Chemical mapping of a 177-nucleotide RNA with DMS and 2A3.
DMS adducts were read by reverse transcription with MarathonRT.
The 2A3 profile rests on 1,586 reads.
The RNA was probed in 150 mM KOAc, 10 mM MgCl2 and 150 mM bicine (pH 8.5) at 24 C.
The data come from the RNA Mapping Database (RMDB), library OK2TRN.
Values cover nucleotides 27 to 126.

RNA sequence: GGGAACGACUCGAGUAGAGUCGAAAAGUGAACCAGACUCCGUCUGCAAUCCCGGCACCUCGGGAGGCCGAGGCUGGCGGAUCACUCGUGGUUAGGAGCUGGAGACCAGCCCGGCCAACACAGCGAAAUCACACACUGAGUUCGCUCAGUGUGUGAUAAAAGAAACAACAACAACAAC
Reactivity to DMS in 0.01 (KOAc 150mM, MgCl2 10mM, bicine 150mM(pH8.5), 24C), signal-to-noise 2, nucleotides 027 to 126: g020u000g000a140a160c140c030a120g000a070c040u010c100c130g010u000c040u000g010c130a260a120u010c030c000c000g000g010c080a130c090c040u010c130g000g000g000a110g010g020c000c010g000a150g010g020c020u000g000g020c060g000g000a120u010c030a040c040u000c090g010u010g010g000u010u000a080g020g010a050g030c150u000g010g000a260g020a080c030c000a010g000c010c010c000g000g000c000c000a040a020c090a050c080a060g010c080g020a080a080
Reactivity to 2A3 in 0.01 (KOAc 150mM, MgCl2 10mM, bicine 150mM(pH8.5), 24C), signal-to-noise 2, nucleotides 027 to 126: g050u040g010a020a020c050c030a020g010a090c070u060c250c090g080u060c040u060g040c060a030a110u040c000c000c000g020g030c130a150c020c070u080c010g040g010g030a080g000g020c010c010g040a050g010g000c000u000g010g020c030g020g050a090u130c000a040c010u060c010g100u140g140g180u230u190a190g120g050a020g020c110u050g000g030a070g040a090c010c000a000g010c000c010c010g000g000c000c000a020a020c010a010c000a010g060c020g090a150a100